About this RNA
An RNA of 207 nucleotides, treated with 2A3 and read out base by base. Source: RMDB library OK3TST, as collected in RNAgym. The reactions ran in a buffer of 150 mM KOAc, 10 mM MgCl2 and 150 mM bicine (pH 8.5), at 24 C. Reactivities are given for positions 27 through 156.
RNA sequence: GGGAACGACUCGAGUAGAGUCGAAAAGGCUGGUGAUGCCGAGCACGAUGGCGGUGAAGAUCAGCGGCAGCACCGUGAAGGUCAGCAGUUUGGUGAAGGUGGACCCGAUGGUGUCCAGCGUCGUGAUGAGCCAGCCCGCUCCGGUGGAGUCGGCCACCGUAUUCUUUCCGUUCGCGGAAAGAAUACGAAAAGAAACAACAACAACAAC
Reactivity to 2A3 in 0.01 (KOAc 150mM, MgCl2 10mM, bicine 150mM(pH8.5), 24C), signal-to-noise 1, nucleotides 027 to 156: g000g000c000u020g000g010u060g060a020u070g040c020c040g000a010g000c020a010c150g110a090u150g080g000c040g000g020u070g060a240a080g050a120u060c010a030g080c000g010g000c020a020g000c000a000c020c000g030u000g060a070a030g000g000u050c030a020g000c000a020g060u130u220u270g100g000u160g000a100a050g150g040u080g080g040a020c000c000c020g040a040u100g000g000u100g050u030c060c030a040g080c110g020u070c000g000u030g050a160u020g000a000g000c000c080a080g000c050c000c000g010c030u150c110c040g000g010u010g000g050a030g000u000c030g030g000c000c030a020c030